[RMDB]
RNA sequence: GGGAACGACUCGAGUAGAGUCGAAAACAGCAAAAAGGAACCGAUUCCCACCAUGUUCGGAAAGAGAUACCGGGCGAGGCGCUGAAGAAAGAAUCUCGCUUCAGACACCCCAAGGACUCGACUGAAGAAUGCACGCCAUCGUUCGCGAUGGCGUGAACCAUAAGCGUAAGUUCGCUUACGCUUAUGGAAAAGAAACAACAACAACAAC
Reactivity to DMS in 0.01 (KOAc 150mM, MgCl2 10mM, bicine 150mM(pH8.5), 24C), signal-to-noise 1, nucleotides 027 to 156: c010a120g020c000a050a050a070a110a080g000g000a120a150c020c080g040a140u000u000c000c010c010a150c100c060a120u000g040u000u010c020g070g020a080a060a130g000a090g010a170u010a050c000c000g000g000g010c100g000a100g020g000c040g010c010u010g000a100a040g030a040a040a060g000a170a120u000c090u000c040g000c010u000u000c020a070g010a300c040a070c020c010c010c040a100a060g010g010a130c060u000c000g060a230c010u010g010a160a040g010a080a050u000g010c000a020c000g000c000c000a040u000c000g010u010u000c300g030c000g040a030u000g000g010c000g050u000g000a000a030
Reactivity to 2A3 in 0.01 (KOAc 150mM, MgCl2 10mM, bicine 150mM(pH8.5), 24C), signal-to-noise 3, nucleotides 027 to 156: c030a000g080c050a060a080a080a040a060g100g030a070a040c050c050g020a080u030u040c020c000c010a010c040c050a090u110g050u040u040c020g000g030a080a130a040g040a010g010a000u070a100c020c010g020g010g000c100g030a130g020g050c190g040c090u030g010a030a010g030a040a270a030g050a110a140u110c120u070c150g030c000u020u010c010a020g010a070c010a070c010c010c020c030a030a100g020g000a020c020u010c050g040a060c030u030g010a010a030g050a110a070u150g040c000a000c010g010c030c000a000u000c000g020u070u060c130g020c000g080a010u000g000g000c000g000u000g000a000a000

Chemical mapping of a 207-nucleotide RNA with DMS and 2A3. The reactions ran in a buffer of 150 mM KOAc, 10 mM MgCl2 and 150 mM bicine (pH 8.5), at 24 C. Values cover nucleotides 27 to 156. It was measured as part of the RMDB library M2RFPK. 2A3 adducts were read by reverse transcription with SuperScript II with manganese. The 2A3 profile rests on 1,898 reads.